[RMDB]
This 177-nucleotide RNA was probed chemically with 2A3 and DMS. DMS adducts were read by reverse transcription with MarathonRT. The RNA was probed in 150 mM KOAc, 10 mM MgCl2 and 150 mM bicine (pH 8.5) at 24 C. For DMS, 4,767 sequencing reads were counted. The 2A3 profile rests on 10,295 reads.

RNA sequence: GGGAACGACUCGAGUAGAGUCGAAAAGAUAUGGAGGGAGCUGUCGCUGCUGCGAAUCGGAAACGAUUCGAACUACAGCAAAAGUCAGCGAAGAACUCCUAAGUCAAAAGUAUGGUUCGCCAUACAAGGAUCAUAAAAUGUUCGCAUUUUAUGAUCCAAAAGAAACAACAACAACAAC
Reactivity to 2A3 in 0.01 (KOAc 150mM, MgCl2 10mM, bicine 150mM(pH8.5), 24C), signal-to-noise 4, nucleotides 027 to 126: g030a020u070a020u150g010g010a020g030g010g020a060g010c010u010g020u040c030g020c200u040g020c000u010g010c000g000a000a000u020c000g000g030a070a050a020c010g000a000u000u000c000g010a030a010c050u190a050c050a010g000c000a030a060a080a120g030u030c010a000g000c030g110a200a040g040a030a020c000u000c000c000u010a110a020g050u040c030a070a000a040a120g000u010a000u020g000g070u050u120c300g040c080c000a000u000a010c020a000a080
Reactivity to DMS in 0.01 (KOAc 150mM, MgCl2 10mM, bicine 150mM(pH8.5), 24C), signal-to-noise 5, nucleotides 027 to 126: g000a040u010a300u010g000g000a020g000g000g000a120g020c000u000g010u000c020g020c200u000g010c010u000g000c000g000a010a010u000c000g010g020a130a100a220c000g020a010u000u000c000g000a050a050c100u010a290c010a010g010c020a050a060a170a160g010u000c010a000g020c010g000a070a160g020a160a200c000u000c000c000u020a050a150g000u010c020a050a080a110a140g000u000a000u000g000g010u000u010c270g020c010c000a010u000a010c010a110a100